[RMDB]
RNA sequence: GGGAACGACUCGAGUAGAGUCGAAAACGUUGACCGCAUGUUCGUGACGGGGAUGUCGGUGUAGUUCUGGGUUGAUGGAGUCGUGGCUAUUACUGGCACGACGGGCUUAGCGGCAGGCGCGGCGGCGCGCUCGGAGUAGUUUCGACUACUCCGAGCGAAAAGAAACAACAACAACAAC
Reactivity to DMS in 0.01 (KOAc 150mM, MgCl2 10mM, bicine 150mM(pH8.5), 24C), signal-to-noise 2, nucleotides 027 to 126: c070g000u000u000g010a110c060c000g020c090a070u010g010u010u000c070g060u010g000a120c150g010g000g000g000a070u010g010u000c010g010g000u000g010u020a020g010u010u000c040u020g010g020g030u010u000g000a080u000g030g000a180g000u000c040g000u000g010g030c000u040a070u000u030a120c180u030g000g000c080a050c020g000a050c070g000g000g000c030u000u000a070g020c090g000g000c070a120g010g000c080g020c020g020g000c080g020g000c070g000
Reactivity to 2A3 in 0.01 (KOAc 150mM, MgCl2 10mM, bicine 150mM(pH8.5), 24C), signal-to-noise 3, nucleotides 027 to 126: c070g040u030u080g080a110c000c000g050c050a070u070g070u170u170c090g040u090g140a070c050g000g000g020g040a020u080g040u080c040g000g040u020g020u050a110g040u070u000c020u050g060g010g010u060u070g120a180u090g100g010a040g020u020c010g010u040g060g020c000u010a020u130u240a160c160u110g030g000c010a000c030g010a010c000g000g000g000c000u020u030a010g030c000g050g000c020a010g000g050c030g000c000g040g000c000g000g000c020g000
About this RNA: This 177-nucleotide RNA was probed chemically with DMS and 2A3. It was measured as part of the RMDB library OK1LIB. The RNA was probed in 150 mM KOAc, 10 mM MgCl2 and 150 mM bicine (pH 8.5) at 24 C.